[RMDB]
RNA sequence: GGGAACGACUCGAGUAGAGUCGAAAAGGGUCAGGCAGGCGUCAGCUCGGUUUCCACCUCUCUACUCCCCAUGGCCAUGCUCGCCCAAAGCGCGAUGGCGCCGGAUUGCGCGGGAGCUGGCGUAGACACAUAUGAUGGGCUUCGGCCCAUCAUAUGUAAAAGAAACAACAACAACAAC
Reactivity to 2A3 in 0.01 (KOAc 150mM, MgCl2 10mM, bicine 150mM(pH8.5), 24C), signal-to-noise 4, nucleotides 027 to 126: g060g010g010u060c040a040g020g050c010a010g010g030c000g040u030c050a020g030c040u030c030g040g020u010u080u050c020c000a060c000c010u030c000u000c000u030a060c030u050c000c000c010c010a100u060g070g000c000c020a050u230g030c030u010c020g170c000c010c040a090a190a020g010c020g000c020g050a040u060g020g040c010g020c000c000g060g050a090u100u100g010c030g000c010g010g030g000a000g000c000u000g000g000c000g020u020a050g060a010c020
Reactivity to DMS in 0.01 (KOAc 150mM, MgCl2 10mM, bicine 150mM(pH8.5), 24C), signal-to-noise 3, nucleotides 027 to 126: g000g000g020u010c080a080g000g020c030a070g020g000c070g000u010c100a090g010c020u000c020g000g010u000u010u010c030c040a110c060c020u020c040u000c010u010a120c100u010c000c000c000c060a170u020g000g010c000c010a050u030g010c050u000c050g000c020c050c130a060a140a110g020c010g000c010g010a070u000g000g000c030g000c010c040g000g010a050u010u000g010c020g030c030g010g000g020a020g000c000u000g010g000c010g000u010a060g010a140c150